Chemical mapping of a 177-nucleotide RNA with DMS.

[RMDB]
RNA sequence: GGGAACGACUCGAGUAGAGUCGAAAACGACAGCUUUUCGAAGCUGUCGAUUGGCAAAGGCUAGGACCGGCGAGACAAAGGUCCGAUAGCAAAUCGUAACGAAGCUCGCCUGCUUCGGCAGGCGAAAAUACUUAGGCCAGUUCGCUGGCCUAAGUAUAAAAGAAACAACAACAACAAC
Reactivity to DMS in 0.01 (KOAc 150mM, MgCl2 10mM, bicine 150mM(pH8.5), 24C), signal-to-noise 2, nucleotides 027 to 126: c020g000a020c000a010g000c010u000u000u010u020c120g000a060a010g010c000u000g000u000c000g010a000u000u020g000g000c070a070a170a140g010g000c010u000a100g030g000a030c000c010g000g020c110g020a150g010a160c260a080a140a100g010g000u000c010c020g000a120u000a040g040c030a020a080a060u010c080g010u010a060a100c140g000a090a170g010c120u000c010g010c000c000u000g000c000u000u010c190g040g000c030a020g000g010c000g000a000a000a040
Conditions: 150 mM KOAc, 10 mM MgCl2 and 150 mM bicine (pH 8.5), 24 C. Source: RMDB library M2PK50, as collected in RNAgym.